[RMDB]
RNA sequence: GGGAACGACUCGAGUAGAGUCGAAAAAACAGAUUGAAACUCAGUAAUUGAGCGGGCAGAGGCACUUUUACCAGUCAUAAUUUAUACAAGUAUCGUCUACUGUUAUCGGAAAUGAUCAAAUGCAACAUACGACUAUUCUUUUCGAAGAAUAGUCGUAAAAAGAAACAACAACAACAAC
Reactivity to 2A3 in 0.01 (KOAc 150mM, MgCl2 10mM, bicine 150mM(pH8.5), 24C), signal-to-noise 2, nucleotides 027 to 126: a000a000c070a040g050a110u100u090g040a030a010a020c020u020c050a010g040u190a300a020u160u060g030a010g050c030g030g000g040c030a010g000a060g040g000c000a020c000u050u050u000u080a070c020c020a020g080u060c020a060u040a220a090u090u230u180a150u020a080c030a010a080g010u020a040u090c020g030u110c070u040a040c030u070g060u120u060a070u140c000g060g060a080a070a050u140g040a020u050c040a070a110a000u160g000c020a040a040c010a110
Reactivity to DMS in 0.01 (KOAc 150mM, MgCl2 10mM, bicine 150mM(pH8.5), 24C), signal-to-noise 4, nucleotides 027 to 126: a050a060c090a070g010a130u000u000g020a090a070a120c050u000c020a040g000u000a090a120u010u000g000a050g030c110g010g010g000c060a030g010a090g020g020c040a040c050u000u000u000u000a070c060c050a100g000u000c090a060u020a060a090u010u000u000a090u000a090c100a050a060g000u000a050u000c140g010u010c080u000a070c030u000g010u010u000a050u000c090g010g010a040a050a060u000g000a050u000c090a040a060a050u010g000c090a040a030c160a180